Structure probing data (DMS and 2A3) for a 177-nucleotide construct.
Conditions: 150 mM KOAc, 10 mM MgCl2 and 150 mM bicine (pH 8.5), 24 C.
For DMS the reverse transcriptase was MarathonRT.
Source: RMDB library TTRDES, as collected in RNAgym.
[RMDB]
RNA sequence: GGGAACGACUCGAGUAGAGUCGAAAAAAGAUAUGGAGGUUAGGGAGUCCGAUCAAUGCUUGGACCUUCAGUCGGAAACGACUGAAGCUAGCAUUGGUUCGGACGAAGAACUAACCUCCUAAGUCAAGGUAUGUCUUAGGUUCGCCUAAGACAUACCAAAAGAAACAACAACAACAAC
Reactivity to DMS in 0.01 (KOAc 150mM, MgCl2 10mM, bicine 150mM(pH8.5), 24C), signal-to-noise 3, nucleotides 027 to 126: a110a070g000a040u000a300u000g000g000a010g010g010u000u000a010g010g000g000a060g010u000c000c000g010a030u000c000a000a010u010g000c010u010u020g070g000a190c300c010u000u000c000a020g000u000c010g000g010a110a160a160c010g010a030c000u010g020a010a010g030c020u010a010g000c000a020u010u000g000g010u000u000c000g030g020a020c000g010a040a080g000a110a140c010u000a000a000c000c000u000c000c000u010a000a070g010u000c040a150a170
Reactivity to 2A3 in 0.01 (KOAc 150mM, MgCl2 10mM, bicine 150mM(pH8.5), 24C), signal-to-noise 2, nucleotides 027 to 126: a010a000g050a040u070a060u140g000g000a000g010g000u010u010a000g070g000g000a030g000u020c010c010g010a000u000c000a000a000u000g020c010u100u180g050g180a260c060c000u000u020c000a000g010u010c000g010g020a080a060a060c030g000a000c000u000g000a000a000g040c000u000a010g000c000a000u000u000g040g040u150u230c010g000g000a000c030g000a030a000g000a000a000c000u020a000a000c000c000u010c000c000u000a020a000g030u010c060a110a050